[RMDB]
RNA sequence: GGGAACGACUCGAGUAGAGUCGAAAAUAGAUGACGACCAUCAGGGACAGCUUCAACGGCUCUUACCAGCCUAACUUCGAUCACUGGACCGCUGAUCGUCACGGCGAUUUAUGCCGCACAUGGACGCCGUAGUUAACGUUUUCGAACGUUAACUACGAAAAGAAACAACAACAACAAC
Reactivity to 2A3 in 0.01 (KOAc 150mM, MgCl2 10mM, bicine 150mM(pH8.5), 24C), signal-to-noise 6, nucleotides 027 to 126: u150a010g160a080u050g000a000c020g020a020c020c030a020u040c060a120g000g000g020a010c000a010g010c020u050u030c040a070a050c110g010g000c010u000c010u050u080a060c020c030a010g010c010c000u070a130a110c060u170u160c120g040a050u050c040a010c040u020g010g080a130c010c000g050c060u010g010a030u010c010g000u000c010a010c050g000g000c010g010a030u080u140u070a140u300g010c030c020g030c020a090c010a080u100g070g010a010c030g040c070
Reactivity to DMS in 0.01 (KOAc 150mM, MgCl2 10mM, bicine 150mM(pH8.5), 24C), signal-to-noise 7, nucleotides 027 to 126: u010a120g010a120u010g000a010c010g020a030c030c020a030u010c060a180g030g000g000a090c020a020g010c170u000u000c040a090a160c300g010g010c000u010c030u000u020a120c240c230a040g000c000c000u000a120a110c210u000u000c180g010a030u010c170a110c000u000g010g000a080c010c010g010c200u000g000a030u000c000g010u000c020a060c040g010g010c010g000a140u000u010u010a070u010g000c030c060g010c140a110c080a060u000g010g000a060c080g010c130
Description: Source: RMDB library OK2TRN, as collected in RNAgym. This 177-nucleotide RNA was probed chemically with 2A3 and DMS. The reactions ran in a buffer of 150 mM KOAc, 10 mM MgCl2 and 150 mM bicine (pH 8.5), at 24 C. For DMS the reverse transcriptase was MarathonRT. Reactivities are given for positions 27 through 126.